RNA sequence: GGGAACGACUCGAGUAGAGUCGAAAACGCUGGGUCGUGGAAGUUCUUUUGACGAAGCCACUGAAGCGCGCACGGUGGGCUUCGAUAAGAACCCACGACCUGUGCUGAAGCGCGCACGGCAACCGAAAGGUGCGAAACUGCUAUGUUCGCAUAGCAGCAGAUCAGGAUAGUUCGCUAUCCUGAUCUGAAAAGAAACAACAACAACAAC
Reactivity to 2A3 in 0.01 (KOAc 150mM, MgCl2 10mM, bicine 150mM(pH8.5), 24C), signal-to-noise 5, nucleotides 027 to 156: c040g010c030u130g000g000g020u000c000g000u000g010g040a300a240g020u000u000c040u040u130u120u230g120a100c090g010a000a000g020c000c000a030c000u040g040a190a060g050c030g000c010g000c060a050c070g000g040u080g060g200g050c010u010u010c000g030a030u150a090a030g000a000a000c000c000c000a000c010g000a000c000c000u000g010u000g000c020u060g040a090a020g020c010g000c000g000c030a000c010g060g000c020a090a060c010c010g050a100a030a030g040g000u020g000c010g020a070a060a080c000u000g000c000u000a000u010g070u060u050c240g000c120a000u000a000g000c000a000g000
Reactivity to DMS in 0.01 (KOAc 150mM, MgCl2 10mM, bicine 150mM(pH8.5), 24C), signal-to-noise 1, nucleotides 027 to 156: c120g040c050u000g000g000g040u010c000g040u010g020g000a190a180g030u000u010c000u000u000u000u000g040a150c060g000a070a050g010c010c000a010c030u000g010a030a080g000c040g070c020g050c000a300c040g000g030u010g020g070g010c000u000u000c010g020a060u010a060a080g000a010a040c050c000c000a040c000g020a050c000c000u000g010u000g000c010u000g000a120a160g000c040g040c020g000c040a270c020g000g000c000a080a220c020c030g010a090a170a270g030g010u010g000c030g000a080a140a230c000u000g010c000u000a000u000g040u010u000c300g030c010a020u000a010g000c000a020g020